Source: RMDB library OK2TST, as collected in RNAgym. Chemical mapping of a 177-nucleotide RNA with DMS and 2A3. For DMS, 2,737 sequencing reads were counted. For 2A3 the reverse transcriptase was SuperScript II with manganese. Conditions: 150 mM KOAc, 10 mM MgCl2 and 150 mM bicine (pH 8.5), 24 C.
RNA sequence: GGGAACGACUCGAGUAGAGUCGAAAACGACUGUGUCAGAAACAUUCUCAGAUAUUUCAGAAAGACACCUGAGGAAGCCCCCUCCCGUUCCCCAGCGGUGAUGGCUGUCAGAGGGAAGUUUAACAUAGUAUAAAUGAUCAUUCGUGAUCAUUUAUACAAAAGAAACAACAACAACAAC
Reactivity to DMS in 0.01 (KOAc 150mM, MgCl2 10mM, bicine 150mM(pH8.5), 24C), signal-to-noise 3, nucleotides 027 to 126: c120g000a100c100u000g000u010g020u000c050a110g010a150a070a040c050a080u000u000c030u000c060a080g020a080u000a040u010u000u000c050a200g000a120a160a240g000a040c090a030c060c050u000g000a090g010g010a050a150g000c010c010c000c030c010u010c000c010c000g000u000u000c030c000c010c080a110g010c060g010g020u000g000a050u000g010g020c020u010g010u010c050a050g010a110g010g010g010a080a110g010u020u000u000a040a060c100a060u000a120
Reactivity to 2A3 in 0.01 (KOAc 150mM, MgCl2 10mM, bicine 150mM(pH8.5), 24C), signal-to-noise 1, nucleotides 027 to 126: c000g110a100c110u130g000u060g060u070c030a040g160a000a120a040c020a120u060u050c030u010c040a010g000a100u090a230u100u230u120c070a080g090a150a190a010g040a130c030a020c070c000u040g020a070g000g080a180a060g060c040c030c000c050c010u000c000c000c000g000u020u010c000c000c000c000a000g060c030g000g070u050g040a090u150g040g000c000u040g040u050c000a020g020a040g100g000g070a080a080g030u100u040u100a080a090c100a080u090a060